[RMDB]
RNA sequence: GGGAACGACUCGAGUAGAGUCGAAAAGUUAUGCUCUCGCUGCCUAAUGGCGGUGCGGGAAACCCACUCUAAAGUCUUUAGGGUUAGCCCCUUAAGGCGGGGUUCGGAGGCACCUGGCAACAGAAGCUGAAACUGUGCACAUUCGUGUGCACAGUAAUCUUACGUACCAUUUCGAUGGUACGUAAGAAAAAGAAACAACAACAACAAC
Reactivity to DMS in 0.01 (KOAc 150mM, MgCl2 10mM, bicine 150mM(pH8.5), 24C), signal-to-noise 1, nucleotides 027 to 156: g010u000u000a070u000g000c000u010c010u000c040g000c010u040g030c000c010u000a120a120u000g040g040c020g030g050u000g020c060g000g030g020a030a010a090c010c000c000a150c100u010c100u000a120a030a150g000u000c020u000u000u000a010g010g010g000u000u000a190g010c090c010c010c000u010u000a020a030g030g040c040g020g000g000g000u000u010c050g010g050a280g020g010c030a030c020c010u000g010g000c040a030a050c050a060g000a040a070g010c030u020g000a100a080a070c000u000g000u000g010c000a020c000a100u010u000c290g030u000g040u000g060c000a020c010a020g000u000a030a040
Reactivity to 2A3 in 0.01 (KOAc 150mM, MgCl2 10mM, bicine 150mM(pH8.5), 24C), signal-to-noise 3, nucleotides 027 to 156: g050u070u050a120u290g040c050u010c000u000c000g020c000u010g000c010c030u300a300a160u220g080g000c040g000g050u050g020c040g000g000g000a100a020a050c030c020c000a060c030u130c050u110a210a220a040g000u000c010u000u030u060a000g050g010g000u070u100a050g050c020c000c010c010u000u050a000a010g000g000c000g000g020g000g000u050u240c130g150g010a000g000g010c000a010c010c020u020g090g000c010a020a010c000a040g030a040a000g000c020u060g020a080a040a000c000u010g010u010g000c000a000c000a020u030u080c180g050u010g000u010g050c000a000c000a000g000u000a000a020